[RMDB]
The record gives the reactivity of an RNA of 177 nucleotides to 2A3 and DMS. It was measured as part of the RMDB library OK2TST. For DMS, 791 sequencing reads were counted. The 2A3 profile rests on 679 reads.
RNA sequence: GGGAACGACUCGAGUAGAGUCGAAAAGAAUAUGCCUUCGGUUGGUUACGUACUGAAACUGGCGUACACCGUCUGGUACGUAAAAGCCCAUUUGAUUCGGGCGGUCGCCGCCAUACCUCUUUCAGUAGUCACGAUCAUGGUUCGCCAUGAUCGUGACAAAAGAAACAACAACAACAAC
Reactivity to 2A3 in 0.01 (KOAc 150mM, MgCl2 10mM, bicine 150mM(pH8.5), 24C), signal-to-noise 1, nucleotides 027 to 126: g060a100a010u190a000u130g040c000c000u090u180c140g030g000u110u180g040g050u060u010a010c010g010u040a000c010u020g010a080a080a030c060u060g050g050c020g070u120a120c040a120c140c000g010u020c030u010g000g010u000a030c010g010u010a090a050a000a010g020c000c000c120a090u140u120u100g170a230u150u080c080g000g000g020c000g040g000u120c000g050c080c000g010c000c000a080u140a090c020c050u090c010u000u000u120c050a100g020u070a080
Reactivity to DMS in 0.01 (KOAc 150mM, MgCl2 10mM, bicine 150mM(pH8.5), 24C), signal-to-noise 1, nucleotides 027 to 126: g010a080a120u030a080u020g010c100c030u010u010c100g000g000u020u010g040g040u000u020a050c090g010u000a020c010u000g000a110a090a030c150u000g040g000c030g000u010a140c230a150c110c010g040u010c040u000g000g000u020a010c030g000u020a090a050a090a110g040c020c020c020a150u020u020u020g010a180u000u000c090g020g010g020c020g000g060u000c020g080c300c020g010c130c020a060u000a090c070c080u010c070u010u000u000c040a060g010u000a170